[RMDB]
RNA sequence: GGGAACGACUCGAGUAGAGUCGAAAAGGGGCUGACAGGAAUUGACAGUAGAGUGUAUCAUGUCAGUAAGCAUGCCGGGGAAUGGUGGUUUACCCCGUUAUCAAAUGAUUACCGACCAAUAAUUGGCUUAGCUCGUUGGGCUUCGGCCCAACGAGAACCAAAGUUAAAUGUUCGCAUUUAACUUUGGAAAAGAAACAACAACAACAAC
Reactivity to 2A3 in 0.01 (KOAc 150mM, MgCl2 10mM, bicine 150mM(pH8.5), 24C), signal-to-noise 7, nucleotides 027 to 156: g010g000g010g010c020u010g020a010c020a010g030g080a080a120u140u070g060a070c040a030g110u140a040g060a050g060u100g020u040a050u130c040a040u050g020u030c010a010g030u060a050a010g040c030a020u080g060c030c000g000g000g000g020a020a030u050g000g010u010g010g020u040u030u100a080c010c000c000c010g060u040u030a020u040c040a020a020a030u060g020a030u060u070a020c010c040g080a080c040c060a050a050u250a120a090u090u070g050g000c040u070u110a050g030c000u010c010g000u010u000g000g000g000c000u030u030c190g090g000c000c020c000a000a000c000g000a000g000a000a000
Reactivity to DMS in 0.01 (KOAc 150mM, MgCl2 10mM, bicine 150mM(pH8.5), 24C), signal-to-noise 2, nucleotides 027 to 156: g020g020g020g030c030u010g010a110c040a080g000g010a120a110u010u000g010a090c040a050g010u010a100g010a100g030u000g030u010a140u010c030a080u000g020u000c020a060g020u000a070a080g000c030a050u010g030c140c030g000g020g070g040a060a140u010g020g010u010g010g010u000u000u000a240c010c010c010c000g050u000u000a070u000c300a060a100a100u000g010a170u010u010a060c020c010g010a050c010c040a040a140u000a100a180u000u020g000g010c060u000u000a170g000c020u000c040g040u020u010g000g020g000c010u020u010c300g020g040c010c000c020a000a000c000g010a010g010a030a120

Chemical mapping of a 207-nucleotide RNA with 2A3 and DMS. The RNA was probed in 150 mM KOAc, 10 mM MgCl2 and 150 mM bicine (pH 8.5) at 24 C. It was measured as part of the RMDB library M2RFPK. For DMS the reverse transcriptase was MarathonRT. For DMS, 4,000 sequencing reads were counted.